Structure probing data (DMS) for a 177-nucleotide construct.
RNA sequence: GGGAACGACUCGAGUAGAGUCGAAAAAAUGGUUUAAGAGAGCACGGGCAUGAUACAUACAAUUGGAGGCCUAGUUUAAUAUUAGGCGGCUAAUUCUCCUUUAGCUCUCAAUUUAGUGGUCACCUGCUCAUGCUCCUACGUUCGCGUAGGAGCAUGAAAAAGAAACAACAACAACAAC
Reactivity to DMS in 0.01 (KOAc 150mM, MgCl2 10mM, bicine 150mM(pH8.5), 24C), signal-to-noise 1, nucleotides 027 to 126: a050a010u010g010g000u000u000u010a100a110g000a100g010a030g040c010a080c190g020g020g000c250a080u000g000a090u000a020c130a150u020a150c180a040a010u010u000g000g010a060g010g030c000c000u000a000g000u000u000u000a050a160u000a010u000u000a000g010g020c000g010g060c010u000a030a030u010u000c080u000c040c080u000u000u000a150g000c000u000c060u020c000a050a040u000u000u000a110g030u000g000g010u000c030a090c100c040u010g000c170
Background:
Conditions: 150 mM KOAc, 10 mM MgCl2 and 150 mM bicine (pH 8.5), 24 C.